[RMDB]
RNA sequence: GGGAACGACUCGAGUAGAGUCGAAAAUUGUGGAUUGAUUUGCAAUGUAUUUGAAUGAUCCACUUUGUGGAGCUCACCUGGGGCAGGGUAACAUUUCAGUCUGGAGACAAUAGAGUUCUGAGACAGAGCAAUAUAUUCGUUUCGACGAAUAUAUUGCAAAAGAAACAACAACAACAAC
Reactivity to DMS in 0.01 (KOAc 150mM, MgCl2 10mM, bicine 150mM(pH8.5), 24C), signal-to-noise 4, nucleotides 027 to 126: u010u000g010u000g010g000a040u000u000g010a080u010u010u010g010c110a040a070u000g010u020a110u020u000u000g010a070a060u010g000a020u000c010c000a000c000u000u000u000g020u000g010g010a120g020c050u010c060a080c070c030u000g010g010g000g020c070a060g010g000g010u010a030a070c090a050u000u000u000c060a060g000u000c020u000g010g000a110g000a080c060a050a090u000a100g000a100g000u000u000c030u000g010a100g010a070c110a100g000a200
Reactivity to 2A3 in 0.01 (KOAc 150mM, MgCl2 10mM, bicine 150mM(pH8.5), 24C), signal-to-noise 3, nucleotides 027 to 126: u050u020g010u030g010g010a020u000u060g080a040u060u130u160g040c060a040a110u090g090u260a230u180u140u090g040a050a030u060g000a020u010c000c000a010c010u030u010u020g070u030g040g040a010g020c010u010c060a040c030c030u050g010g010g050g000c030a010g060g000g000u020a050a040c020a070u040u120u130c010a010g030u000c030u050g060g010a030g010a040c010a030a070u090a110g080a020g050u100u000c020u070g040a040g000a030c030a030g090a000